[RMDB]
RNA sequence: GGGAACGACUCGAGUAGAGUCGAAAACGAACACCACUUGGGAGCCGGGGAAAGAACACCAGGUGGCGCUCAUGCUACAGGACGGCCACAAGGGCUCCGUGUACGUGGAUGGUGAGAUUGUGGGGAAGUCAUGCCCUACUUUCGAGUAGGGCAUGACAAAAGAAACAACAACAACAAC
Reactivity to 2A3 in 0.01 (KOAc 150mM, MgCl2 10mM, bicine 150mM(pH8.5), 24C), signal-to-noise 1, nucleotides 027 to 126: c020g000a000a000c010a000c050c000a030c030u060u100g030g010g020a010g000c040c010g110g040g000g090a080a220a040g030a190a010c070a000c080c070a030g040g020u010g050g000c040g080c000u050c000a160u190g070c060u160a070c010a090g040g140a010c010g030g090c000c000a040c030a150a080g250g020g000c030u000c010c030g030u050g000u010a040c080g040u060g020g090a160u000g020g090u070g050a120g010a080u110u050g010u080g030g000g010g060a090a000
Reactivity to DMS in 0.01 (KOAc 150mM, MgCl2 10mM, bicine 150mM(pH8.5), 24C), signal-to-noise 1, nucleotides 027 to 126: c100g020a150a080c050a090c020c010a020c030u000u000g000g010g000a050g070c030c030g000g030g000g000a110a080a090g010a140a120c180a120c010c040a120g000g030u000g000g020c030g000c060u010c050a090u010g000c110u000a110c200a070g000g010a020c130g000g020c030c030a050c090a060a110g040g030g040c010u010c040c000g020u000g040u000a030c120g000u000g000g000a150u010g030g020u010g000a060g000a060u010u010g010u000g050g010g020g000a140a110

Chemical mapping of a 177-nucleotide RNA with 2A3 and DMS. Source: RMDB library OK2TST, as collected in RNAgym. For DMS, 821 sequencing reads were counted. 2A3 is a SHAPE reagent: it acylates the 2'-hydroxyl of flexible nucleotides of all four kinds. For 2A3, 730 sequencing reads were counted.